[RMDB]
RNA sequence: GGGAACGACUCGAGUAGAGUCGAAAACGCAAAGCUGCAGCGCGGCGCUCUGGAGGCCUUGCCCCGCGCACUGCUCUUUACAUGGCCCGACGUGAGGGCACUUCGCGGGCAGUGCUGCGGCUUCGUGAAACUGCCCCUAAGUUCGCUUAGGGGCAAACAGAUCACUAUUAUUCGUAAUAGUGAUCUGAAAAGAAACAACAACAACAAC
Reactivity to 2A3 in 0.01 (KOAc 150mM, MgCl2 10mM, bicine 150mM(pH8.5), 24C), signal-to-noise 7, nucleotides 027 to 156: c030g000c020a030a000a000g010c000u010g000c000a000g010c010g020c030g130g020c080g050c080u060c070u160g200g040a070g030g040c030c050u060u100g010c030c010c020c000g000c000g000c010a010c030u020g000c000u010c020u080u150u170a070c040a110u160g110g020c020c050c050g080a120c040g020u030g020a100g000g010g010c010a010c010u030u020c000g000c020g040g010g000c010a000g010u020g010c000u010g000c000g000g010c000u010u010c000g010u000g030a130a010a020c060u040g010c000c010c000c000u000a000a000g010u020u090c140g060c170u000u000a000g000g000g000g000c000a000a000a000
Reactivity to DMS in 0.01 (KOAc 150mM, MgCl2 10mM, bicine 150mM(pH8.5), 24C), signal-to-noise 3, nucleotides 027 to 156: c030g010c010a040a010a050g030c010u000g000c000a050g010c040g020c020g020g010c030g010c060u010c050u000g010g020a200g030g020c030c060u010u000g010c020c000c000c010g020c060g010c040a050c040u010g000c010u000c050u010u010u010a120c080a090u020g030g020c020c040c040g030a120c070g030u000g010a080g020g000g030c010a010c020u000u000c020g020c050g020g010g030c020a160g010u000g020c000u000g010c000g020g020c020u010u000c000g000u000g010a160a040a090c070u000g030c010c040c000c010u000a020a030g020u000u010c300g030c010u000u000a020g010g020g030g090c000a000a010a010